[RMDB]
Structure probing data (2A3 and DMS) for a 207-nucleotide construct. Conditions: 150 mM KOAc, 10 mM MgCl2 and 150 mM bicine (pH 8.5), 24 C. Reactivities are given for positions 27 through 156. 2A3 is a SHAPE reagent: it acylates the 2'-hydroxyl of flexible nucleotides of all four kinds.
RNA sequence: GGGAACGACUCGAGUAGAGUCGAAAAUGUAUUUUUAGCAGGGACGGGGUUUUACAUGCUGGUCUCAAACUCCUGACCUUCAGUGAUCUGCCUGUCUUGGCCUCCCAAAGUACUGGGAUUACAGGCGUGAGCCACUGCGUCCGGCCCGGAUUUUGCCCAGAACCUGAUAAUUCGUUAUCAGGUUCUGAAAAGAAACAACAACAACAAC
Reactivity to 2A3 in 0.01 (KOAc 150mM, MgCl2 10mM, bicine 150mM(pH8.5), 24C), signal-to-noise 1, nucleotides 027 to 156: u060g010u000a230u000u160u000u010u180a020g000c010a010g080g000g020a060c000g030g000g000g050u100u190u220u240a020c040a040u170g090c090u020g030g030u100c040u040c060a080a040a020c060u070c060c020u070g070a000c040c000u040u030c030a030g010u050g060a090u000c000u090g060c030c010u020g000u000c040u140u130g030g010c090c100u000c020c000c010a050a100a000g110u140a140c120u030g000g030g000a060u060u130a020c030a010g000g010c000g060u040g000a010g040c050c010a030c010u030g030c090g030u000c030c000g030g000c000c030c020g000g000a020u040u030u020u170g050c020c020
Reactivity to DMS in 0.01 (KOAc 150mM, MgCl2 10mM, bicine 150mM(pH8.5), 24C), signal-to-noise 1, nucleotides 027 to 156: u010g000u000a050u010u010u000u000u000a060g070c080a040g020g030g010a100c070g020g030g030g020u000u000u000u040a040c090a080u000g030c060u000g010g000u000c040u020c020a060a050a110c030u010c050c010u010g000a180c010c010u010u000c110a060g010u000g010a120u000c040u010g060c000c030u010g010u000c040u010u000g000g000c070c040u000c030c000c030a000a130a170g010u000a050c100u030g010g000g010a130u010u010a010c040a040g030g000c060g030u010g000a060g020c050c020a010c030u000g010c120g020u000c020c030g000g030c000c000c010g040g000a200u000u000u000u000g000c050c090
Description
High DMS reactivity at an A or C suggests that its Watson-Crick edge is free. It was measured as part of the RMDB library OK3TST.